[RMDB]
Structure probing data (2A3) for a 177-nucleotide construct.
The reactions ran in a buffer of 150 mM KOAc, 10 mM MgCl2 and 150 mM bicine (pH 8.5), at 24 C.
Source: RMDB library OK1LIB, as collected in RNAgym.
RNA sequence: GGGAACGACUCGAGUAGAGUCGAAAAUGAUGUGCGUCUAUUGUGUGGUAAGACUGCGAAGCGGUCCCGGCCUAUCCACAUGAUAGGUUUGUGCUAUGAGGCCGGAAAUAGCACGUGCACAUCUAAAGGGAACGACGAGCUUCGGUUCGUCGUUCCCAAAAGAAACAACAACAACAAC
Reactivity to 2A3 in 0.01 (KOAc 150mM, MgCl2 10mM, bicine 150mM(pH8.5), 24C), signal-to-noise 2, nucleotides 027 to 126: u300g000a010u000g000u000g010c000g000u020c020u040a020u030u030g020u020g000u010g020g050u080a030a010g000a000c010u010g000c070g170a170a060g020c000g000g000u000c000c000c000g020g000c000c020u250a220u050c000c000a000c000a000u000g000a010u000a030g060g000u030u120u140g000u030g000c010u000a010u020g050a040g000g000c000c000g000g010a040a050a000u050a000g000c010a000c010g050u070g000c000a000c000a000u000c000u000a050a000a030